The data come from the RNA Mapping Database (RMDB), library OK2TST. An RNA of 177 nucleotides, treated with DMS and 2A3 and read out base by base. DMS (dimethyl sulfate) methylates the pairing face of unpaired adenines and cytosines.

RNA sequence: GGGAACGACUCGAGUAGAGUCGAAAAGUUACUGAUGCAUGCUUCGCAAACAAAUUUAAUCAAUUUGAUCAAUGGUAUGAGUCUACAUUUGGUCUUGCCUAUUACCGUAACUCUAAGGCUUGUCCUGUAAGGAUGAGGGUUUCGACCCUCAUCCUUAAAAAGAAACAACAACAACAAC
Reactivity to DMS in 0.01 (KOAc 150mM, MgCl2 10mM, bicine 150mM(pH8.5), 24C), signal-to-noise 2, nucleotides 027 to 126: g010u000u000a050c080u000g010a080u010g010c080a040u000g000c060u000u010c160g040c100a070a060a180c020a010a010a060u000u000u000a070a140u010c230a090a030u010u010u000g010a230u010c070a040a030u000g000g010u000a080u000g000a080g010u010c040u010a030c050a010u000u000u000g000g000u000c050u010u010g010c040c000u000a130u000u010a090c060c050g010u000a020a060c060u000c150u020a060a090g010g010c040u000u000g010u000c000c010u000g030
Reactivity to 2A3 in 0.01 (KOAc 150mM, MgCl2 10mM, bicine 150mM(pH8.5), 24C), signal-to-noise 2, nucleotides 027 to 126: g030u000u040a060c020u020g050a120u040g050c010a020u020g010c000u090u160c100g000c060a090a150a030c000a040a070a030u140u140u130a090a050u110c040a000a030u010u030u070g040a060u090c110a040a160u080g030g010u040a040u060g020a000g060u000c040u040a050c050a150u070u080u140g010g000u040c010u000u010g020c020c000u070a160u100u050a060c030c010g040u020a000a060c020u030c030u110a130a020g020g000c000u020u020g040u060c010c030u050g030